[RMDB]
RNA sequence: GGGAACGACUCGAGUAGAGUCGAAAAGAAACGAAGGUUGGAUAAUCCUGGUCGGACAUCAGGAGGUUAGUGCAAUCGCAUAAUCCAGCUUGACAACAAAAAGGAAAAAGAAAGAAGAAAAAGAAAAACUAGUCGUGCUAUUCGUAGCACGACUAGUAAAAGAAACAACAACAACAAC
Reactivity to DMS in 0.01 (KOAc 150mM, MgCl2 10mM, bicine 150mM(pH8.5), 24C), signal-to-noise 1, nucleotides 027 to 126: g000a050a090a000c000g000a200a060g000g000u000u010g000g000a000u000a140a090u020c000c000u050g000g000u030c200g020g030a300c180a050u000c020a000g010g000a000g100g010u000u020a120g030u000g030c000a130a000u080c280g040c000a000u000a030a050u010c000c010a000g090c000u000u000g060a120c150a050a020c080a000a070a010a090a050g020g000a000a000a120a000a040g000a020a150a030g000a010a060g000a020a060a080a010a010g040a200a070a040a070
Reactivity to 2A3 in 0.01 (KOAc 150mM, MgCl2 10mM, bicine 150mM(pH8.5), 24C), signal-to-noise 2, nucleotides 027 to 126: g010a060a000a030c000g020a000a000g000g000u020u000g020g000a010u000a010a000u070c000c000u030g020g020u020c100g090g010a020c000a000u020c010a040g000g000a030g070g030u180u030a020g000u020g010c010a030a300u290c100g010c000a000u010a050a000u040c000c000a000g000c000u020u060g030a020c080a010a020c050a030a040a100a040a010g150g100a120a020a010a040a030g140a020a000a070g110a020a060g160a020a080a060a000a030g180a010a060a020a000
This 177-nucleotide RNA was probed chemically with DMS and 2A3. Values cover nucleotides 27 to 126. The RNA was probed in 150 mM KOAc, 10 mM MgCl2 and 150 mM bicine (pH 8.5) at 24 C.